[RMDB]
RNA sequence: GGGAACGACUCGAGUAGAGUCGAAAAUUAAUAGAUUUCGAUCUAUUAAACAGGCGGAGGCUCGCUCCUAGCGACCGGCGCAAGCGCGCACGGUACAGCGAUUACUGAAUCCCUUCGGGGAUUCAAAUGCAAUAUCUAUCUUCGGAUAGAUAUUGCAAAAAGAAACAACAACAACAAC
Reactivity to 2A3 in 0.01 (KOAc 150mM, MgCl2 10mM, bicine 150mM(pH8.5), 24C), signal-to-noise 1, nucleotides 027 to 126: u000u010a010a000u010a000g010a020u050u190u070c150g040a000u000c000u010a000u020u030a080a150a030c060a030g050g070c070g000g080a060g010g100c140u050c060g060c020u000c020c030u010a000g010c040g040a010c000c010g110g000c010g000c030a140a170g240c130g000c010g000c150a130c100g000g000u060a140c040a020g000c000g030a010u020u250a120c060u070g000a000a000u000c000c000c000u020u010c190g010g000g000g000a000u010u000c000a000a010a000
Reactivity to DMS in 0.01 (KOAc 150mM, MgCl2 10mM, bicine 150mM(pH8.5), 24C), signal-to-noise 2, nucleotides 027 to 126: u000u000a020a000u010a000g000a030u000u000u010c080g000a040u000c000u000a010u000u000a020a010a120c120a120g000g000c040g000g000a110g020g030c150u000c040g010c050u010c040c020u000a080g000c030g000a040c010c020g010g000c000g010c000a100a170g010c240g000c000g010c000a060c010g010g000u000a050c060a120g030c040g000a060u010u020a090c220u010g010a030a000u000c000c000c000u000u010c290g060g000g000g010a010u000u000c000a010a090a100

Chemical mapping of a 177-nucleotide RNA with 2A3 and DMS. It was measured as part of the RMDB library M2PK50. For 2A3, 1,071 sequencing reads were counted. The RNA was probed in 150 mM KOAc, 10 mM MgCl2 and 150 mM bicine (pH 8.5) at 24 C.